RNA sequence: GGGAACGACUCGAGUAGAGUCGAAAAGAGAUUAUGAAUGAUACAAAAGUUUUGGAAACACUUCGUAAUCGAAAUGCUUCCGUCAUCGAACUUGUGAUGCUUCUGUGCUCACAGGAAUGGCAGACUAAUGAUCCUGCCUAUUCGUAGGCAGGAUCAUAAAAGAAACAACAACAACAAC
Reactivity to 2A3 in 0.01 (KOAc 150mM, MgCl2 10mM, bicine 150mM(pH8.5), 24C), signal-to-noise 1, nucleotides 027 to 126: g120a000g010a000u000u020a000u020g000a030a000u010g030a020u020a050c020a040a130a020a210g110u180u270u170u060g070g050a030a100a020c030a040c080u020u030c000g020u020a010a000u020c000g000a000a090a000u090g030c080u060u000c010c040g040u020c000a020u010c020g050a020a130c020u000u040g010u000g010a050u240g070c040u180u140c080u150g230u170g010c030u030c010a000c010a000g040g000a030a020u040g050g000c020a060g030a120c090u240a140
Reactivity to DMS in 0.01 (KOAc 150mM, MgCl2 10mM, bicine 150mM(pH8.5), 24C), signal-to-noise 2, nucleotides 027 to 126: g010a300g000a010u010u020a020u010g000a050a010u000g000a300u000a100c050a010a020a130a210g000u000u000u010u050g010g010a170a070a120c030a070c200u020u000c000g020u000a050a030u010c010g000a050a090a020u030g010c170u000u000c000c000g010u000c010a020u000c100g010a070a140c000u000u000g010u010g010a020u000g020c000u000u000c260u020g030u000g010c030u010c000a010c000a020g000g000a080a040u000g020g000c070a130g000a050c140u000a060